The record gives the reactivity of an RNA of 177 nucleotides to DMS. For DMS, 1,636 sequencing reads were counted.

RNA sequence: GGGAACGACUCGAGUAGAGUCGAAAAGAUAUGGACCUCUCGGAUAGGCGUUGAUCUAGACUCGAUAGCAGAUCGGAAACGAUCUGCUAUCGAGUCUAGGGAGCCUUUCCGAGGAGGUCCUAAGUCAGAUAAUGUGUCUGUUCGCAGACACAUUAUCAAAAGAAACAACAACAACAAC
Reactivity to DMS in 0.01 (KOAc 150mM, MgCl2 10mM, bicine 150mM(pH8.5), 24C), signal-to-noise 1, nucleotides 027 to 126: g000a110u020a300u000g000g000a000c000c000u000c000u000c000g010g000a020u000a010g020g020c000g010u000u030g000a020u010c000u010a010g020a000c010u000c010g000a020u010a000g030c030a040g000a020u000c000g020g000a130a110a300c000g050a010u010c000u000g020c010u000a000u000c010g000a000g000u010c010u000a000g000g000g010a030g020c000c000u000u000u010c000c000g000a060g000g020a000g030g000u010c000c000u000a010a070g010u000c070a190

Record summary: DMS (dimethyl sulfate) methylates the pairing face of unpaired adenines and cytosines. For DMS the reverse transcriptase was MarathonRT. It was measured as part of the RMDB library TTRINS.